Structure probing data (2A3 and DMS) for a 177-nucleotide construct.
[RMDB]
RNA sequence: GGGAACGACUCGAGUAGAGUCGAAAAGUCUAGCGAAGGGAUCCCACCCGGGACACACGCAAGUCGCGAAUUAGGCCGACCGGCCAAGGUCAAUGGCAGAACUCAACUGCAUGAGUAAGCUAGACGAGCUGCUAGGAGUAUUCGUACUCCUAGCAGCAAAAGAAACAACAACAACAAC
Reactivity to 2A3 in 0.01 (KOAc 150mM, MgCl2 10mM, bicine 150mM(pH8.5), 24C), signal-to-noise 2, nucleotides 027 to 126: g010u000c000u000a000g000c000g090a290a060g050g000g020a020u000c020c000c010a060c000c020c000g000g020g020a060c080a010c020a010c050g000c070a160a100g050u080c030g060c050g100a100a200u170u050a090g020g000c010c030g030a070c050c040g000g080c130c030a030a060g050g030u010c030a060a140u170g000g050c030a010g040a080a030c040u040c130a010a060c010u030g030c030a030u020g020a000g050u030a000a020g000c000u000a000g000a000c000g000a030
Reactivity to DMS in 0.01 (KOAc 150mM, MgCl2 10mM, bicine 150mM(pH8.5), 24C), signal-to-noise 1, nucleotides 027 to 126: g010u000c020u020a010g000c010g000a120a070g010g000g010a080u000c010c000c010a300c050c010c040g030g010g000a070c250a120c010a010c120g000c000a060a010g000u010c070g010c130g010a030a040u000u000a080g000g000c000c000g010a050c150c130g010g020c150c290a030a120g040g010u000c000a170a040u000g020g020c030a040g010a050a070c040u000c060a040a050c040u000g000c000a040u000g000a150g000u000a100a140g000c000u000a010g020a010c010g010a100
The RNA was probed in 150 mM KOAc, 10 mM MgCl2 and 150 mM bicine (pH 8.5) at 24 C. Reactivities are given for positions 27 through 126. 2A3 adducts were read by reverse transcription with SuperScript II with manganese. It was measured as part of the RMDB library OK2TRN. For DMS the reverse transcriptase was MarathonRT. For DMS, 792 sequencing reads were counted.